[RMDB]
RNA sequence: GGGAACGACUCGAGUAGAGUCGAAAAUAAAACAAACAAAUGUUCCUUGGAUUGCUACGGCCAGCAGAAUUGAGUAAUCUGGCCGUUAGGAACUUAAAAUAGCAAUCAAGCACUGAGAACAGUGCAACGCUCAGAUGCACUUCGGUGCAUCUGAGCGAAAAGAAACAACAACAACAAC
Reactivity to 2A3 in 0.01 (KOAc 150mM, MgCl2 10mM, bicine 150mM(pH8.5), 24C), signal-to-noise 1, nucleotides 027 to 126: u110a000a050a000a010c130a000a090a000c010a050a050a000u070g050u000u000c000c000u000u000g110g000a000u000u000g000c000u010a000c000g000g000c000c000a000g000c000a030g150a270a030u230u160g150a000g040u090a000a120u050c000u000g000g000c000c000g000u000u000a000g000g000a000a000c000u040u050a000a000a090a100u070a000g000c000a000a030u000c000a010a010g000c000a000c000u020g030a080g010a300a010c160a000g000u010g000c030a000a010

Conditions: 150 mM KOAc, 10 mM MgCl2 and 150 mM bicine (pH 8.5), 24 C. The record gives the reactivity of an RNA of 177 nucleotides to 2A3. For 2A3, 995 sequencing reads were counted. High 2A3 reactivity points to a flexible backbone, as in loops and unpaired stretches. Values cover nucleotides 27 to 126. The data come from the RNA Mapping Database (RMDB), library OK1LIB.